[RMDB]
This 177-nucleotide RNA was probed chemically with 2A3 and DMS.
RNA sequence: GGGAACGACUCGAGUAGAGUCGAAAAGCAGUUGCAGGAUGACCGGCUGAUCCUUGCCGAGCAGGUCGCCGUUCGCGAUGCGAAACAGCAGCGAGUAAGCGAUCUGACCUGCGGCGCCGGUGACGGAUAUAAAUAUCGCUUUCGAGCGAUAUUUAUAAAAAGAAACAACAACAACAAC
Reactivity to 2A3 in 0.01 (KOAc 150mM, MgCl2 10mM, bicine 150mM(pH8.5), 24C), signal-to-noise 3, nucleotides 027 to 126: g030c040a050g030u160u120g040c020a000g040g090a130u090g070a030c000c000g030g000c040u060g070a130u060c040c000u040u090g000c000c010g000a020g030c000a010g010g000u000c000g010c010c010g020u010u010c010g000c050g220a300u110g020c040g030a200a210a060c070a060g010c000a010g000c020g010a000g030u110a050a020g010c000g000a010u020c010u010g030a070c000c020u060g020c010g020g000c000g010c000c000g040g000u020g030a020c030g030g010a000
Reactivity to DMS in 0.01 (KOAc 150mM, MgCl2 10mM, bicine 150mM(pH8.5), 24C), signal-to-noise 9, nucleotides 027 to 126: g020c070a100g020u000u010g010c040a080g010g010a130u010g000a100c060c010g000g000c020u000g010a110u000c050c040u010u010g030c010c020g010a100g010c010a010g000g010u000c000g020c010c040g000u000u000c010g010c000g000a120u010g020c000g010a170a110a140c220a150g010c010a150g000c010g000a030g000u010a130a110g000c000g000a010u000c010u000g000a130c100c020u000g010c010g010g000c040g010c020c020g000g000u010g000a110c070g000g010a230

High DMS reactivity at an A or C suggests that its Watson-Crick edge is free. The DMS profile rests on 30,193 reads.